[RMDB]
RNA sequence: GGGAACGACUCGAGUAGAGUCGAAAAACGCAAAUCCGGCUACCGCAAUCGGGAAAAGAUGCUUGUGCCGUUUUCGUCAGCCACUCGCAGAGCAGAGCAAAUUAAGCUAACAGCCGAGCAGCAAACGUGCGAAAAUUUGAUUCGUCAAAUUUUCGCAAAAAGAAACAACAACAACAAC
Reactivity to DMS in 0.01 (KOAc 150mM, MgCl2 10mM, bicine 150mM(pH8.5), 24C), signal-to-noise 1, nucleotides 027 to 126: a060c050g000c080a000a060a040u010c010c050g010g000c080u090a060c040c230g010c140a070a160u000c030g010g000g000a010a040a060a050g000a080u050g000c140u000u000g010u010g000c010c040g030u000u000u000u010c000g000u000c040a040g000c040c020a130c030u000c060g090c040a000g000a010g020c040a070g000a060g060c090a120a040a210u000u040a060a070g040c010u020a020a160c170a230g010c040c010g000a190g040c040a090g000c090a000a040a130c050g000
Reactivity to 2A3 in 0.01 (KOAc 150mM, MgCl2 10mM, bicine 150mM(pH8.5), 24C), signal-to-noise 1, nucleotides 027 to 126: a000c070g000c050a010a010a010u060c020c010g010g000c000u040a000c000c050g030c060a090a140u040c080g050g090g030a030a110a090a050g120a040u050g010c020u050u040g130u110g040c010c000g000u040u000u000u000c000g140u020c030a000g120c040c000a120c030u000c020g000c010a020g010a000g010c000a000g000a000g010c000a000a000a140u100u030a090a060g010c070u020a110a000c000a000g000c020c000g010a010g000c010a000g020c010a020a020a020c080g020
The data come from the RNA Mapping Database (RMDB), library RFM100. An RNA of 177 nucleotides, treated with DMS and 2A3 and read out base by base. For DMS the reverse transcriptase was MarathonRT. Values cover nucleotides 27 to 126. The reactions ran in a buffer of 150 mM KOAc, 10 mM MgCl2 and 150 mM bicine (pH 8.5), at 24 C.